[RMDB]
RNA sequence: GGGAACGACUCGAGUAGAGUCGAAAACUGACGAUGAGCCCUGCGUGCACGCGUGCGCCGUGCAGCCGGAAACGCGCGUUCAGCGUCUCGCCCUCGUCGUCGACGAAGCGCGCGCAGGCCGCCUUCAGGUAGCGUAUGCAUUCGUGCAUACGCUACCAAAAGAAACAACAACAACAAC
Reactivity to DMS in 0.01 (KOAc 150mM, MgCl2 10mM, bicine 150mM(pH8.5), 24C), signal-to-noise 2, nucleotides 027 to 126: c070u000g010a010c070g020a010u000g020a030g000c210c060c060u000g020c010g010u000g020c070a020c070g030c020g010u000g010c100g020c040c020g010u000g000c060a120g030c110c050g010g010a070a080a010c050g020c110g020c030g010u000u010c030a080g020c010g000u000c040u000c050g010c030c300c020u020c010g010u000c020g010u000c030g000a050c100g000a030a070g000c120g000c040g030c000g010c070a060g020g010c030c030g030c030c020u010u000c030a110
Reactivity to 2A3 in 0.01 (KOAc 150mM, MgCl2 10mM, bicine 150mM(pH8.5), 24C), signal-to-noise 2, nucleotides 027 to 126: c040u030g020a010c000g010a030u020g020a010g030c010c020c000u020g000c050g040u030g000c100a010c010g020c000g010u030g030c040g020c020c030g040u070g050c010a050g090c020c020g070g000a110a070a030c020g060c020g010c000g010u040u070c070a040g030c010g010u000c050u050c040g010c030c000c010u050c000g020u010c010g050u010c040g010a050c080g050a040a020g010c000g010c000g000c020g000c180a060g140g050c040c000g000c020c000u040u050c030a020